This 177-nucleotide RNA was probed chemically with 2A3. The reactions ran in a buffer of 150 mM KOAc, 10 mM MgCl2 and 150 mM bicine (pH 8.5), at 24 C.
RNA sequence: GGGAACGACUCGAGUAGAGUCGAAAAGCCUCAUCCGUGCUGCAACGGAAAGCUGCAGCUUGGCUUACAUCGAUCUUACCGGUAACUCUCUCACACGGUCGGUGGGCGAUGCUUUCGGCGACUUGGUCCUAGGGCGUCCUUUCGAGGACGCCCUAGGAAAAGAAACAACAACAACAAC
Reactivity to 2A3 in 0.01 (KOAc 150mM, MgCl2 10mM, bicine 150mM(pH8.5), 24C), signal-to-noise 2, nucleotides 027 to 126: g000c000c000u120c040a170u000c000c010g100u030g000c000u000g030c000a110a080c010g050g180a140a000a050g030c030u000g000c020a000g000c040u000u100g060g010c030u070u050a020c000a170u010c050g130a070u000c000u110u190a020c000c030g050g000u090a220a150c000u030c000u000c030u050c070a020c000a000c000g040g060u070c000g040g000u050g000g000g000c020g040a100u110g050c110u050u100u020c060g020g010c000g030a080c060u030u060g160g000u040